[RMDB]
Source: RMDB library TTRDES, as collected in RNAgym. Chemical mapping of a 177-nucleotide RNA with 2A3 and DMS. For 2A3 the reverse transcriptase was SuperScript II with manganese.
RNA sequence: GGGAACGACUCGAGUAGAGUCGAAAAGAUAUGGAUAUUGGAGCUUGAUGCAGAUUAUUCGGAAACGAAUAAUUCUGUAUAUCGAGCUCCCGUAUCCUAAGUCAAAGAGCUUAGUUCGCUAAGCUCAGAUAUAAUAAGUCUUCGGACUUAUUAUAUCAAAAGAAACAACAACAACAAC
Reactivity to 2A3 in 0.01 (KOAc 150mM, MgCl2 10mM, bicine 150mM(pH8.5), 24C), signal-to-noise 3, nucleotides 027 to 126: g040a030u100a050u190g000g000a010u010a000u020u010g000g010a000g000c010u010u000g010a000u030g020c010a010g000a020u000u000a010u010u010c020g000g040a130a100a080c010g010a020a000u010a010a020u260u110c010u010g010u010a030u020a000u040c000g010a000g000c000u010c000c010c000g000u000a000u030c000c010u010a090a020g060u020c070a160a090a140g000a000g000c000u010u010a000g010u100u120c300g040c210u010a000a000g000c000u000c000a010
Reactivity to DMS in 0.01 (KOAc 150mM, MgCl2 10mM, bicine 150mM(pH8.5), 24C), signal-to-noise 4, nucleotides 027 to 126: g010a040u010a300u000g000g010a020u010a000u010u010g010g010a020g010c000u000u000g000a030u000g000c010a010g000a030u000u000a000u000u000c000g000g000a170a150a260c010g010a030a010u000a000a010u010u010c000u020g010u000a100u000a110u000c000g010a010g020c000u000c000c000c030g000u000a000u000c000c000u000a030a120g010u000c030a130a150a140g010a020g020c010u000u000a010g010u000u010c270g010c000u000a010a000g000c010u000c010a040

The DMS profile rests on 4,508 reads. The RNA was probed in 150 mM KOAc, 10 mM MgCl2 and 150 mM bicine (pH 8.5) at 24 C. For 2A3, 7,024 sequencing reads were counted.